[RMDB]
RNA sequence: GGGAACGACUCGAGUAGAGUCGAAAAAAGGAUAUCGAGCCUGCAUGUAUACAUAUGUUGCCACUGGACUUUUAUAACUGCUUAAACAUUAUAUCUAAUGUAGAUGAUGUUUUUGCGGAAAUGGAUGGCUAUGAACUAUAUAAAAAUGCUGAUACUGCACUCAGUCACGUUUCGACGUGACUGAGUGAAAAGAAACAACAACAACAAC
Reactivity to 2A3 in 0.01 (KOAc 150mM, MgCl2 10mM, bicine 150mM(pH8.5), 24C), signal-to-noise 2, nucleotides 027 to 156: a010a000g110g000a110u120a060u160c070g010a020g000c000c010u010g020c030a020u040g040u110a070u040a040c040a050u110a050u130g050u070u140g100c000c020a030c020u060g000g010a070c040u060u110u110u030a120u080a080a100c000u000g000c000u010u010a000a000a000c010a010u020u040a160u060a010u130c010u020a140a220u300g130u130a110g020a010u000g000a000u000g000u000u040u000u000u000g000c020g000g030a070a050a030u150g020g060a030u030g020g000c030u030a020u100g010a030a010c030u030a000u040a060u070a220a090a030a030a040u060g000c010u030g020a050u040a110c000u070g010